[RMDB]
About this RNA: Chemical mapping of a 177-nucleotide RNA with DMS and 2A3. For 2A3 the reverse transcriptase was SuperScript II with manganese. For 2A3, 22,053 sequencing reads were counted. For DMS the reverse transcriptase was MarathonRT. Conditions: 150 mM KOAc, 10 mM MgCl2 and 150 mM bicine (pH 8.5), 24 C.

RNA sequence: GGGAACGACUCGAGUAGAGUCGAAAAGAUCAGGCGAAGUGAGCCUCCAAAUCAGCUACCAUGUGGAUACAUGGGAAGCUGAGUUAAUGAAGGAUCAUUGAGCAAACGUUGCUCAGCACGAGUGCGGGUUAGAACAAUCUUUCGAGAUUGUUCUAACAAAAGAAACAACAACAACAAC
Reactivity to DMS in 0.01 (KOAc 150mM, MgCl2 10mM, bicine 150mM(pH8.5), 24C), signal-to-noise 7, nucleotides 027 to 126: g010a150u030c120a070g020g020c020g000a170a060g000u010g010a020g000c010c000u010c040c020a020a100a070u000c000a000g020c010u000a210c000c000a000u000g000u000g020g030a150u060a050c000a000u000g000g000g010a070a080g000c000u000g000a010g020u010u020a080a100u000g010a040a020g000g000a040u000c010a010u000u000g000a300g010c010a080a100a110c100g000u000u020g020c000u000c020a130g000c140a100c120g010a030g010u000g000c040g000g010
Reactivity to 2A3 in 0.01 (KOAc 150mM, MgCl2 10mM, bicine 150mM(pH8.5), 24C), signal-to-noise 9, nucleotides 027 to 126: g090a060u160c090a050g120g000c010g010a040a010g020u010g020a010g010c020c000u000c000c010a110a220a030u000c000a000g000c000u000a020c000c000a010u000g010u030g190g190a100u160a300c000a000u000g000g000g030a040a010g000c000u000g000a000g000u030u110a090a090u060g030a050a000g010g000a010u020c000a020u020u040g020a010g000c000a040a050a040c050g080u150u270g010c000u010c010a020g100c100a020c140g010a010g010u050g020c020g060g070